An RNA of 207 nucleotides, treated with 2A3 and read out base by base. The RNA was probed in 150 mM KOAc, 10 mM MgCl2 and 150 mM bicine (pH 8.5) at 24 C. 2A3 adducts were read by reverse transcription with SuperScript II with manganese. For 2A3, 828 sequencing reads were counted.
RNA sequence: GGGAACGACUCGAGUAGAGUCGAAAAGGUUGUGCUGGUGGUGCAUUACGCCGACUCGUCGAACUCCGGCGAAGGAGCGCGCCGAGAGGCAGGACCGCUGCUGGGACGGCUGGUCAAGGCACUGACCGGAUGGGCUCCAGCCAUCGAUGUGGCGCCGCCAGAUCGAAUCUUUCGAGAUUCGAUCUGGAAAAGAAACAACAACAACAAC
Reactivity to 2A3 in 0.01 (KOAc 150mM, MgCl2 10mM, bicine 150mM(pH8.5), 24C), signal-to-noise 1, nucleotides 027 to 156: g110g000u010u030g000u020g060c060u000g000g050u020g010g120u040g030c050a120u090u070a030c040g000c000c000g250a280c050u000c010g020u000c000g040a030a040c000u020c060c000g070g030c120g070a110a190g060g000a000g040c040g040c000g000c030c040g070a100g000a010g010g000c010a020g070g050a020c030c100g030c080u060g000c030u080g030g100g040a080c010g020g000c060u000g010g060u030c070a040a060g060g000c030a020c070u050g130a060c000c000g030g000a040u050g000g060g010c040u080c020c020a000g030c000c020a050u100c040g040a090u120g030u050g040g000c010g000c020c000g000